[RMDB]
RNA sequence: GGGAACGACUCGAGUAGAGUCGAAAACAGGGCCUAUCGAUCCUUUAUGUGCUUAAAUCUUAAGCCUAGAGGUGUCAGAAAAGUUACCACAGGGAUAACUGGCUUGUGGCAGCCAAGCGCUCAUAGCGCUCCGGGAAUUUUUCGAAAUUCCCGGAGCAAAAGAAACAACAACAACAAC
Reactivity to 2A3 in 0.01 (KOAc 150mM, MgCl2 10mM, bicine 150mM(pH8.5), 24C), signal-to-noise 7, nucleotides 027 to 126: c040a040g020g000g020c000c000u060a090u090c040g030a030u020c000c020u020u040u030a120u160g110u120g000c000u040u030a060a160a260u160c050u070u040a040a000g010c000c000u010a000g010a010g030g010u080g060u050c010a010g070a030a110a020a020g040u020u050a030c010c010a020c040a080g000g020g070a090u060a220a090c060u080g150g020c000u040u040g040u030g030g020c020a000g000c010c030a060a030g020c040g000c040u030c020a090u120a080g060c050
Reactivity to DMS in 0.01 (KOAc 150mM, MgCl2 10mM, bicine 150mM(pH8.5), 24C), signal-to-noise 3, nucleotides 027 to 126: c090a120g000g000g020c000c020u000a170u010c070g020a030u010c000c000u000u000u000a020u010g010u100g020c010u000u020a020a090a180u050c170u020u000a000a040g010c000c000u000a050g000a000g000g000u010g000u010c020a090g010a070a030a120a050g020u010u000a080c010c030a070c110a010g010g000g020a110u010a050a080c160u040g020g000c040u020u000g000u020g010g000c070a040g000c000c030a050a090g010c080g000c030u000c040a080u010a100g020c170